RNA sequence: GGGAACGACUCGAGUAGAGUCGAAAACCAUAGGAUUUCGAUCCUAUGGCCUGCUAUGUCGCGUAAUAGCUUUUCGACUCUUCUUGGGUCGUUCCCACGCGAUGGGGACCGGUUUCGACCGGUCCAAGACUAGGGAUUGUUUCGACAAUCCCUAGUCAAAAGAAACAACAACAACAAC
Reactivity to DMS in 0.01 (KOAc 150mM, MgCl2 10mM, bicine 150mM(pH8.5), 24C), signal-to-noise 2, nucleotides 027 to 126: c000c000a010u000a000g000g000a000u000u000u000c170g010a020u000c000c000u000a000u000g010g020c140c140u010g000c010u000a020u000g020u020c240g020c230g000u010a080a000u000a010g000c000u000u000u000u000c010g010a020c000u000c000u000u000c000u010u010g000g000g010u000c010g020u010u000c000c000c000a000c030g000c120g010a090u010g010g010g010g000a020c000c010g020g010u000u000u000c200g010a030c000c000g000g000u000c000c010a020a020
Overview
The record gives the reactivity of an RNA of 177 nucleotides to DMS. Source: RMDB library M2PK50, as collected in RNAgym. Conditions: 150 mM KOAc, 10 mM MgCl2 and 150 mM bicine (pH 8.5), 24 C. For DMS, 2,550 sequencing reads were counted.